[RMDB]
RNA sequence: GGGAACGACUCGAGUAGAGUCGAAAAAGAAGUAAGUCGAUUAAGUUCAUUCAUGACUUUUCCAGAUGUUGCAUACAUAACUUUUUUUAUUUGUAUUCGAACUAGUCCAAGCCGAUUCUCAAAAUCACUCCGUGUCGUUUUUCGAAACGACACGGAGAAAAGAAACAACAACAACAAC
Reactivity to 2A3 in 0.01 (KOAc 150mM, MgCl2 10mM, bicine 150mM(pH8.5), 24C), signal-to-noise 2, nucleotides 027 to 126: a010g140a150a000g010u170a030a020g000u000c010g120a010u030u100a000a090g250u000u040c050a080u220u010c000a000u270g040a050c000u080u000u020u000c060c030a020g100a090u080g140u050u070g000c020a070u070a150c010a010u060a000a090c050u090u000u000u000u000u000u300a140u030u080u030g020u000a030u010u180c050g050a000a000c060u000a040g060u000c000c010a000a030g020c000c000g070a060u070u010c000u040c060a000a060a010a050u010c090a090
Conditions: 150 mM KOAc, 10 mM MgCl2 and 150 mM bicine (pH 8.5), 24 C. Chemical mapping of a 177-nucleotide RNA with 2A3. For 2A3, 697 sequencing reads were counted. High 2A3 reactivity points to a flexible backbone, as in loops and unpaired stretches.